[RMDB]
RNA sequence: GGGAACGACUCGAGUAGAGUCGAAAAUAAGCGGAAUCGCUUGUAAAAUGCCUGAGCGUUGGCUGUUUAUGAGUUAAACCUAAUUAACUGCUCUAAACAUGUAGUACCAAAAGUUAAGGAUUCGCGGACGGGGGUUCAAAUCCCCCCGCCUCCACCAGUCUUAUAAUGAGUUCGCUCAUUAUAAGACAAAAGAAACAACAACAACAAC
Reactivity to DMS in 0.01 (KOAc 150mM, MgCl2 10mM, bicine 150mM(pH8.5), 24C), signal-to-noise 1, nucleotides 027 to 156: u000a030a030g020c000g000g030a120a180u010c050g040c010u010u020g030u000a020a090a100a090u010g010c000c030u000g010a090g000c070g060u000u010g040g000c020u010g010u000u000u000a030u030g010a060g000u010u000a070a080a210c090c080u050a090a110u000u000a060a120c080u000g010c030u000c040u000a030a050a060c020a080u000g020u000a050g010u020a110c050c040a010a060a070a100g020u000u010a100a110g020g010a210u000u000c140g000c150g020g050a010c060g010g010g040g000g000u000u000c040a000a140a210u010c230c000c000c000c000c040g010c020c010u000c050c000a070c070c050a110
Reactivity to 2A3 in 0.01 (KOAc 150mM, MgCl2 10mM, bicine 150mM(pH8.5), 24C), signal-to-noise 2, nucleotides 027 to 156: u130a020a000g030c050g030g120a130a130u250c030g000c040u000u030g000u060a080a100a120a120u110g020c000c010u050g040a040g030c030g080u040u070g030g010c000u020g020u000u040u010a150u140g020a020g020u040u100a080a080a030c010c040u020a100a170u060u060a090a060c050u070g010c010u010c020u060a050a070a000c010a010u120g060u120a080g060u070a110c040c000a010a090a100a060g010u080u100a090a060g040g030a080u130u110c060g010c000g060g000a010c030g060g000g010g000g000u030u120c030a070a120a050u050c000c000c000c000c000c000g000c000c000u030c010c030a070c040c020a010
Structure probing data (DMS and 2A3) for a 207-nucleotide construct. For 2A3, 1,059 sequencing reads were counted. The DMS profile rests on 2,161 reads. For DMS the reverse transcriptase was MarathonRT.